[RMDB]
RNA sequence: GGGAACGACUCGAGUAGAGUCGAAAAGAAGCAGUCCUUAUUGUGUGUGAUGUUUAGUCAUCGCACUGUCCCUACGGGCUGCCAACGUAGGGCCAAUGUGCCGAGAGGCACUAGAAGUACGGCUUAUUAUGAAGCAUCGCCGUACCAACGAUGCUGAGACUGAUUAAUCGUUCGCGAUUAAUCAGUCAAAAGAAACAACAACAACAAC
Reactivity to DMS in 0.01 (KOAc 150mM, MgCl2 10mM, bicine 150mM(pH8.5), 24C), signal-to-noise 2, nucleotides 027 to 156: g000a110a080g030c030a030g010u000c050c010u000u000a070u010u020g010u000g050u000g040u010g010a020u010g020u020u020u000a190g030u000c020a000u010c010g010c000a010c010u000g000u000c010c000c010u000a060c050g010g010g020c050u010g000c080c030a050a040c010g040u000a040g010g010g010c030c030a090a130u010g020u000g010c000c010g000a280g000a300g030g020c000a030c010u020a100g010a090a040g020u000a030c040g020g060c000u000u000a110u000u000a180u010g010a090a070g030c000a000u000c040g020c000c030g000u010a110c080c010a030a030c010g010a020u000g020c010u010g000a280
Reactivity to 2A3 in 0.01 (KOAc 150mM, MgCl2 10mM, bicine 150mM(pH8.5), 24C), signal-to-noise 5, nucleotides 027 to 156: g140a040a000g000c000a000g030u050c040c050u110u070a200u200u220g090u010g010u010g000u020g050a010u010g080u030u170u210a260g100u210c000a000u000c000g000c000a000c010u010g070u080c010c000c000u000a010c000g030g020g040c080u070g060c010c020a040a000c010g020u030a020g000g020g000c000c010a080a060u110g000u000g000c000c000g020a030g010a020g010g000c000a000c000u010a040g030a070a020g000u010a020c010g000g000c000u010u080a110u100u030a120u210g150a100a040g020c010a020u040c010g000c040c030g060u040a060c000c000a040a020c030g010a010u030g020c030u010g010a020

Structure probing data (DMS and 2A3) for a 207-nucleotide construct. The 2A3 profile rests on 3,872 reads. Source: RMDB library OK3TST, as collected in RNAgym. For 2A3 the reverse transcriptase was SuperScript II with manganese. The reactions ran in a buffer of 150 mM KOAc, 10 mM MgCl2 and 150 mM bicine (pH 8.5), at 24 C.